[RMDB]
RNA sequence: GGGAACGACUCGAGUAGAGUCGAAAAAAAGGAAGUACUCAUUCCAUGUGUCCUGUGAAAUUCAGCCAGCUUCGGGAAGCUGGAGGAAUACAUAUGGCCAAGCUACCUGGGCAGAGAGUAGACAGGGAAUGGAGGUUGGGCACAGUGGCUCACACCACUACGUAAAUUACUUCGGUAAUUUACGUAGAAAAGAAACAACAACAACAAC
Reactivity to 2A3 in 0.01 (KOAc 150mM, MgCl2 10mM, bicine 150mM(pH8.5), 24C), signal-to-noise 5, nucleotides 027 to 156: a000a000a000g100g020a060a030g020u110a080c010u020c060a090u080u000c020c040a070u090g050u030g030u090c010c010u040g020u030g060a110a120a050u030u010c000a010g030c010c000a010g000c010u140u150c130g130g030g150a050a010g000c010u010g010g010a010g010g020a040a010u070a050c020a020u080a070u100g060g000c000c030a050a000g030c020u040a060c020c000u030g030g070g000c060a020g020a000g010a020g080u050a030g040a080c050a010g030g000g030a000a050u060g050g030a020g050g010u080u050g010g000g020c030a040c020a090g070u060g060g010c000u020c020a050c000a020c020c010a020
Reactivity to DMS in 0.01 (KOAc 150mM, MgCl2 10mM, bicine 150mM(pH8.5), 24C), signal-to-noise 2, nucleotides 027 to 156: a040a040a050g020g000a070a060g020u010a030c050u000c040a150u000u000c020c010a080u000g020u000g010u000c020c020u000g060u000g040a030a080a080u000u000c010a030g030c000c030a020g000c000u000u000c060g010g020g020a180a150g010c000u000g030g020a010g030g000a030a020u000a170c040a080u000a000u020g030g030c020c020a040a100g000c040u000a020c070c030u020g020g000g050c050a090g000a100g030a140g010u000a060g020a040c050a010g020g000g000a070a060u010g000g000a080g020g020u000u000g010g030g060c060a060c100a080g010u000g020g030c020u000c120a060c080a060c000c030a130
This 207-nucleotide RNA was probed chemically with 2A3 and DMS. In probing experiments dimethyl sulfate is read out at A N1 and C N3, which are open when not base-paired. Source: RMDB library OK3TST, as collected in RNAgym. Reactivities are given for positions 27 through 156. For DMS, 3,118 sequencing reads were counted.